About this RNA: Source: RMDB library RFMREP, as collected in RNAgym. Structure probing data (DMS and 2A3) for a 177-nucleotide construct. DMS (dimethyl sulfate) methylates the pairing face of unpaired adenines and cytosines. The DMS profile rests on 855 reads. The reactions ran in a buffer of 150 mM KOAc, 10 mM MgCl2 and 150 mM bicine (pH 8.5), at 24 C. Reactivities are rounded to 0.1 and cut off at 0 and 3. 2A3 adducts were read by reverse transcription with SuperScript II with manganese.
RNA sequence: GGGAACGACUCGAGUAGAGUCGAAAAGAGUUGCAGUUGAUUGAAACUAAAUCAUGUGCGCUAAGUUGUCCCGAAAUCAUCGUUUCGGAUUAUAAGAAGGCAGUGUUACUCCUCUAGGACACUGUUGGCUUAAUACGUCGUUCGCGACGUAUUAAGCAAAAGAAACAACAACAACAAC
Reactivity to DMS in 0.01 (KOAc 150mM, MgCl2 10mM, bicine 150mM(pH8.5), 24C), signal-to-noise 1, nucleotides 027 to 126: g000a050g020u010u000g020c010a020g030u000u000g000a050u010u000g000a120a100a190c270u040a050a070a030u020c010a050u000g000u000g030c010g000c040u000a050a110g000u000u000g000u000c080c010c020g000a060a010a060u000c100a030u000c090g020u000u000u000c040g010g010a090u000u000a050u000a060a040g010a070a180g010g000c000a000g020u000g000u000u000a180c060u000c240c080u010c180u000a030g000g000a030c000a000c010u000g070u000u000g020
Reactivity to 2A3 in 0.01 (KOAc 150mM, MgCl2 10mM, bicine 150mM(pH8.5), 24C), signal-to-noise 1, nucleotides 027 to 126: g130a010g000u130u300g070c000a030g010u040u010g000a000u000u040g120a220a090a090c050u080a120a000a000u010c060a060u120g050u090g280c000g000c000u000a010a030g250u280u080g020u000c000c010c010g000a010a050a010u080c040a000u110c070g000u030u000u050c080g100g000a040u140u000a030u160a300a000g140a050a060g020g000c040a010g000u020g000u100u050a160c010u030c110c050u030c100u180a010g070g000a000c000a000c000u000g000u000u010g000